[RMDB]
RNA sequence: GGGAACGACUCGAGUAGAGUCGAAAACUGCGCCUAAAUCGACAUUUACGCCUUCGAAUUCUACAUCGUAGGCGCGACCGCCGACACGCACAGGGUCAGCCUCAAACACCACCACUCUAUAACCUUUUUUCUCCAAUCGAUAAGCACAUAAUAACCCACUUUACGCUAGUUUCGACUAGCGUAAAGUAAAAGAAACAACAACAACAAC
Reactivity to 2A3 in 0.01 (KOAc 150mM, MgCl2 10mM, bicine 150mM(pH8.5), 24C), signal-to-noise 4, nucleotides 027 to 156: c030u060g000c010g030c020c030u050a060a050a060u080c030g040a010c040a050u080u180u170a040c070g020c030c010u060u040c020g030a100a100u160u090c060u120a060c090a140u030c020g020u020a000g000g000c010g020c000g010a020c010c040g040c020c020g030a020c010a030c100g000c010a040c010a080g010g000g040u020c010a010g010c020c000u050c020a090a070a030c020a030c020c000a030c010c000a030c020u000c020u060a060u060a190a080c010c040u050u050u000u010u050u040c040u010c040c020a030a080u060c000g010a020u030a130a040g050c020a010c010a060u130a070a040u070a110a070c020c000c020